RNA sequence: GGGAACGACUCGAGUAGAGUCGAAAACACGUCUAACCGGACCCGCGCCCCCUUGUCUUUGUUCUGGCACUGGCUCAGCUGCGCCUCCAUCAGGUUAAUCUUUUUCACAAACAGCUCUCUCUCGCGCUCCAUGCCACUGAUGGUCUCGAACUGCUCACUAUAUCUCCAGGUUCGCCUGGAGAUAUAGAAAAGAAACAACAACAACAAC
Reactivity to DMS in 0.01 (KOAc 150mM, MgCl2 10mM, bicine 150mM(pH8.5), 24C), signal-to-noise 2, nucleotides 027 to 156: c090a080c060g030u000c020u020a090a140c090c060g000g010a100c030c030c030g030c070g030c020c000c010c010c060u000u010g010u010c010u020u000u000g010u000u000c030u000g030g040c030a090c040u000g020g020c060u000c030a080g050c000u030g070c050g030c000c010u000c010c050a060u010c060a070g030g000u000u000a050a150u000c010u030u000u000u020u010c040a110c080a060a070a090c070a060g000c020u000c010u000c020u000c010u000c010g030c040g040c020u000c000c000a110u010g010c010c050a070c010u000g020a050u000g020g020u000c030u000c040g020a050a070c030u000g010c030u000c040a270